Chemical mapping of a 177-nucleotide RNA with 2A3 and DMS. It was measured as part of the RMDB library OK2TST. The DMS profile rests on 760 reads.

[RMDB]
RNA sequence: GGGAACGACUCGAGUAGAGUCGAAAAGCGACAAGAAAUGGAACGUAUCGAUUCUGUUGAAAUUUUAAUGCCAGCGUUACAACAAGCUGAAUUAUGGGAAGAAUCAGGACGUUGGGGUGCAUAUGGCCUGAUGCAAAGACUUCGGUCUUUGCAUCAGAAAAGAAACAACAACAACAAC
Reactivity to 2A3 in 0.01 (KOAc 150mM, MgCl2 10mM, bicine 150mM(pH8.5), 24C), signal-to-noise 2, nucleotides 027 to 126: g020c020g040a000c030a050a140g090a090a010a060u080g080g000a150a000c080g070u050a070u150c010g020a130u120u040c000u000g060u080u110g080a130a130a180u190u140u060u080a070a110u070g010c080c020a000g040c020g060u000u060a000c000a010a000c010a100a000g100c020u020g060a020a010u120u060a080u240g060g090g010a100a130g020a000a050u050c030a060g030g000a010c030g060u020u040g030g000g050g050u060g050c000a080u080a050u240g040g030c000
Reactivity to DMS in 0.01 (KOAc 150mM, MgCl2 10mM, bicine 150mM(pH8.5), 24C), signal-to-noise 1, nucleotides 027 to 126: g020c130g010a070c060a080a090g010a020a050a140u000g000g000a030a060c070g040u000a120u010c060g010a080u000u000c000u000g020u000u000g030a070a090a140u000u000u030u000a020a080u000g000c130c000a050g030c060g030u020u000a050c110a030a140c210a040a220g010c000u000g030a090a040u000u000a040u000g000g010g000a090a060g000a090a020u000c040a100g000g010a130c120g000u000u000g000g020g000g010u000g010c070a100u010a130u010g010g000c030

For 2A3, 726 sequencing reads were counted.
Reactivities are given for positions 27 through 126.
The reactions ran in a buffer of 150 mM KOAc, 10 mM MgCl2 and 150 mM bicine (pH 8.5), at 24 C.